[RMDB]
RNA sequence: GGGAACGACUCGAGUAGAGUCGAAAAGAUGGAGGGUCUGGCCUCGGACUCCUCCUAUAAGAUGUAACUAUUACGAGGCCAUUAAUGGCGUUUUCGCCUAGGUGCACGACGGCGUGCGUGUCACCGUAAGACUUAAUGAAUAACACGCCGGAUACAAAAAUCAUACGCAUUUCGAUGCGUAUGAUUUAAAAGAAACAACAACAACAAC
Reactivity to 2A3 in 0.01 (KOAc 150mM, MgCl2 10mM, bicine 150mM(pH8.5), 24C), signal-to-noise 2, nucleotides 027 to 156: g190a020u120g000g000a000g000g010g000u000c020u010g030g030c000c000u010c020g010g000a010c010u000c030c000u030c050c000u010a080u040a090a000g060a040u140g090u180a090a060c020u070a120u210u050a050c030g000a000g010g000c010c000a000u100u140a070a120u150g010g000c060g050u010u070u080u260c000g030c020c000u000a040g000g000u000g000c000a000c010g020a000c000g010g000c000g000u020g000c000g000u000g020u050c050a000c030c000g000u040a040a040g030a010c020u050u170a050a090u150g080a050a010u130a210a000c000a000c000g000c000c000g000g000a060u100a040c020a040a130